This 177-nucleotide RNA was probed chemically with DMS and 2A3. For DMS, 1,026 sequencing reads were counted. For DMS the reverse transcriptase was MarathonRT. The reactions ran in a buffer of 150 mM KOAc, 10 mM MgCl2 and 150 mM bicine (pH 8.5), at 24 C. High 2A3 reactivity points to a flexible backbone, as in loops and unpaired stretches.

RNA sequence: GGGAACGACUCGAGUAGAGUCGAAAAGGUAGGUACUGCCCAAUGAGGCAACGAGUGCGCCUCAAACUACCAGUACUCGAAAGAUCUCGGAAUGCCACAUAGAGAUCAAGGUAUUCCAGGGCAGAAAGGGUACGAAGAUGUUCGCAUCUUCGUACCCAAAAGAAACAACAACAACAAC
Reactivity to DMS in 0.01 (KOAc 150mM, MgCl2 10mM, bicine 150mM(pH8.5), 24C), signal-to-noise 1, nucleotides 027 to 126: g020g000u000a000g010g090u000a190c000u050g010c000c000c000a200a200u000g040a000g000g010c000a080a250c120g040a190g000u000g000c140g000c000c010u000c010a020a150a110c000u000a030c000c010a040g000u000a000c060u060c010g070a120a100a150g000a000u000c080u000c070g030g000a100a110u000g020c200c280a100c090a070u000a050g000a000g000a000u000c030a040a270g000g040u060a050u000u000c000c000a150g010g000g000c030a000g000a040a100a090
Reactivity to 2A3 in 0.01 (KOAc 150mM, MgCl2 10mM, bicine 150mM(pH8.5), 24C), signal-to-noise 3, nucleotides 027 to 126: g000g000u040a000g080g120u080a090c010u070g000c000c000c000a020a080u080g000a000g010g010c000a050a050c090g060a100g180u230g010c100g000c030c000u000c000a020a030a000c000u000a000c000c000a000g020u000a010c020u000c060g070a200a040a060g110a040u020c010u010c000g030g070a200a040u220g080c080c040a130c050a030u110a010g050a000g000a010u020c050a060a010g000g000u010a040u020u010c000c010a010g010g000g000c010a000g000a030a040a000